[RMDB]
RNA sequence: GGGAACGACUCGAGUAGAGUCGAAAAGAUGGCGACCGCGUCGCUUUAUGAGCGUUAUCGCGGUGUGGAUGCCAGUGCGAAAGGCGACAAGAAGGCUGACAGCAUUGACAGCACCAUUGAUGAGCUGUGGCGGGAUAUGCGCUGGGCGGUGGCGCGCGCUUGAAAUGCUAUUCGUAGCAUUUCAAGCAAAAGAAACAACAACAACAAC
Reactivity to DMS in 0.01 (KOAc 150mM, MgCl2 10mM, bicine 150mM(pH8.5), 24C), signal-to-noise 1, nucleotides 027 to 156: g000a050u000g020g020c030g000a080c010c010g000c010g060u000c000g040c030u000u000u010a030u000g000a060g020c010g010u010u000a030u010c010g020c000g000g050u010g030u030g010g010a170u000g030c000c000a080g000u000g080c020g040a060a080a180g000g000c040g020a200c040a140a120g030a080a210g030g040c040u030g010a170c090a190g020c020a060u000u000g020a050c050a050g030c050a110c030c030a090u000u000g040a230u000g000a100g030c030u010g030u000g040g000c010g010g000g000a080u000a090u020g000c010g000c030u000g020g020g000c010g020g010u000g000g010c040g010c010g000c070
Reactivity to 2A3 in 0.01 (KOAc 150mM, MgCl2 10mM, bicine 150mM(pH8.5), 24C), signal-to-noise 3, nucleotides 027 to 156: g080a020u080g010g020c040g060a010c000c000g000c020g020u000c010g020c030u020u090u080a260u280g120a020g000c020g040u080u110a050u110c000g020c000g000g010u030g000u010g030g010a020u080g000c010c000a000g020u000g000c020g040a140a030a020g010g020c010g030a060c070a080a020g130a040a050g120g010c000u040g010a050c060a040g040c030a040u030u100g030a050c040a020g010c030a040c040c030a050u040u110g070a080u030g010a080g000c050u040g030u020g100g020c060g010g030g000a020u060a040u160g030c030g010c020u010g000g070g010c020g030g000u050g010g000c000g000c000g010c010